[RMDB]
RNA sequence: GGGAACGACUCGAGUAGAGUCGAAAAUCCGAAAAAGUGUUCCUUAGUUCGGAUUGCAGGCUGCAACUCGCCUGCAUGAAGCCGGAAUCGCUAGUAAUCGCAGGUCAGCUAUACUGCGGUGAAUGUGCUACAGAAUCGGCUUCGGCCGAUUCUGUAGAAAAGAAACAACAACAACAAC
Reactivity to 2A3 in 0.01 (KOAc 150mM, MgCl2 10mM, bicine 150mM(pH8.5), 24C), signal-to-noise 1, nucleotides 027 to 126: u000c000c000g040a110a000a000a010a000g140u020g020u060u040c000c000u100u050a020g050u080u200c050g000g000a000u000u000g060c000a000g000g000c010u110g000c070a080a060c080u030c120g020c000c000u000g000c000a000u060g000a000a040g000c000c000g030g000a010a010u090c000g000c000u000a000g000u000a040a000u000c000g020c000a000g000g000u060c140a030g200c120u050a040u110a290c000u030g000c000g000g030u000g000a030a020u050g000u060g040
Reactivity to DMS in 0.01 (KOAc 150mM, MgCl2 10mM, bicine 150mM(pH8.5), 24C), signal-to-noise 1, nucleotides 027 to 126: u000c030c000g000a050a060a090a080a070g000u000g030u020u000c020c000u000u030a030g000u000u010c000g000g000a050u030u000g000c010a000g000g000c010u000g010c120a160a160c240u010c140g010c000c000u010g030c000a030u010g000a130a080g000c090c030g000g030a020a060u000c070g000c000u000a030g000u000a090a010u000c010g030c000a030g000g020u000c050a080g010c130u010a050u040a060c020u010g000c000g000g020u000g000a140a060u000g000u000g000
Chemical mapping of a 177-nucleotide RNA with 2A3 and DMS. The RNA was probed in 150 mM KOAc, 10 mM MgCl2 and 150 mM bicine (pH 8.5) at 24 C. For DMS the reverse transcriptase was MarathonRT. 2A3 adducts were read by reverse transcription with SuperScript II with manganese.